[RMDB]
RNA sequence: GGGAACGACUCGAGUAGAGUCGAAAAACUGUAGCAUAACCUCUGGCGUGUUGCAAAGCGGUUUGGUGAAAAUGUCACAUCCCAGUGGAGAUGUUGAGGCUUGUAUGGUUCAGGUUACCUGCGGUAGGAUUUAUCGAAUGUUCGCAUUCGAUAAAUCAAAAGAAACAACAACAACAAC
Reactivity to DMS in 0.01 (KOAc 150mM, MgCl2 10mM, bicine 150mM(pH8.5), 24C), signal-to-noise 4, nucleotides 027 to 126: a060c060u010g010u010a080g000c060a060u010a120a070c030c020u000c070u010g000g030c080g040u000g010u000u000g020c050a050a070a120g010c050g010g010u000u000u010g000g020u000g010a060a060a080a070u000g000u000c070a060c040a080u010c140c000c010a130g030u010g010g000a090g000a050u000g010u000u000g010a080g010g000c050u000u010g010u000a060u000g010g010u010u000c060a050g020g010u000u000a070c130c010u000g000c050g010g010u010a070g000
Reactivity to 2A3 in 0.01 (KOAc 150mM, MgCl2 10mM, bicine 150mM(pH8.5), 24C), signal-to-noise 1, nucleotides 027 to 126: a000c050u040g040u060a020g030c020a050u030a100a060c000c000u060c040u040g030g000c070g030u070g070u080u070g000c030a010a090a000g020c010g060g130u060u120u120g130g000u060g020a050a050a050a050u100g070u030c010a000c000a010u040c000c010c010a030g030u050g020g040a110g000a020u050g010u220u070g020a020g040g000c010u100u110g030u080a080u120g010g070u060u040c040a030g000g000u010u040a040c000c000u000g030c040g070g000u020a040g120